[RMDB]
RNA sequence: GGGAACGACUCGAGUAGAGUCGAAAAUUUCAGGCUAGCAUAAUAUACUCUUCCUGCAUGGCCAUAUUAUCAUCUUUAGAAGAUCCUUAUAGCAGUAAGAUGUAUCAUAUGCAUGAGGAGUGCAAAGUACACACAGCUGUUUCGACAGCUGUGUGUAAAAAGAAACAACAACAACAAC
Reactivity to 2A3 in 0.01 (KOAc 150mM, MgCl2 10mM, bicine 150mM(pH8.5), 24C), signal-to-noise 1, nucleotides 027 to 126: u070u050u050c020a020g070g000c040u100a000g000c040a030u040a160a130u140a100u010a080c010u020c000u030u010c010c010u000g000c010a040u000g020g010c000c030a010u030a000u080u040a090u170c000a030u000c000u070u130u050a100g060a180a020g020a090u080c000c000u210u190a200u160a100g000c030a020g060u100a050a000g010a010u050g030u020a000u070c000a010u080a050u030g000c020a020u020g030a000g010g000a010g000u020g000c030a020a190a030g050
Reactivity to DMS in 0.01 (KOAc 150mM, MgCl2 10mM, bicine 150mM(pH8.5), 24C), signal-to-noise 2, nucleotides 027 to 126: u000u000u000c030a140g020g010c070u000a100g010c000a020u000a110a120u000a100u000a110c010u000c020u000u000c020c070u000g030c030a010u010g000g010c120c150a000u000a060u000u000a040u000c050a030u000c010u000u000u000a130g000a140a040g000a080u000c090c030u000u000a090u000a070g010c150a120g000u010a060a010g010a060u000g010u000a060u000c100a200u010a060u000g000c020a010u000g000a090g000g000a070g000u010g000c120a080a050a090g020
Conditions: 150 mM KOAc, 10 mM MgCl2 and 150 mM bicine (pH 8.5), 24 C. Chemical mapping of a 177-nucleotide RNA with 2A3 and DMS. For 2A3 the reverse transcriptase was SuperScript II with manganese. It was measured as part of the RMDB library OK2TST. The DMS profile rests on 974 reads. The 2A3 profile rests on 785 reads.